[RMDB]
RNA sequence: GGGAACGACUCGAGUAGAGUCGAAAAGAAAUUACGUUUCCUUUACACUUCUCAAACCGGGAUCAAGAGAAGCAAAGUAUCCCUCAUAUCCACGAUGGAGGGUGUCGUGGAGUAUACUGUACCAAAAAGAGCGAACACGGCUUCGGCCGUGUUCGAAGAUUCUCUGACUCUUCGGAGUCAGAGAAUCAAAAGAAACAACAACAACAAC
Reactivity to 2A3 in 0.01 (KOAc 150mM, MgCl2 10mM, bicine 150mM(pH8.5), 24C), signal-to-noise 2, nucleotides 027 to 156: g030a000a070a020u200u140a050c030g000u000u080u000c000c000u040u060u070a060c070a080c020u030u010c010u020c040a160a110a090c030c050g060g010g000a050u080c080a200a050g020a010g010a060a010g040c130a070a040a010g050u040a040u030c020c060c000u080c010a080u090a060u080c020c000a020c000g020a000u020g070g080a040g050g040g050u080g010u010c000g000u000g020g000a000g000u000a020u020a030c120u040g160u170a080c030c030a050a070a050a020a000g110a050g090c000g000a000a000c010a000c000g000g010c000u050u060c200g100g000c000c000g020u000g000u000u000c000g000a000a000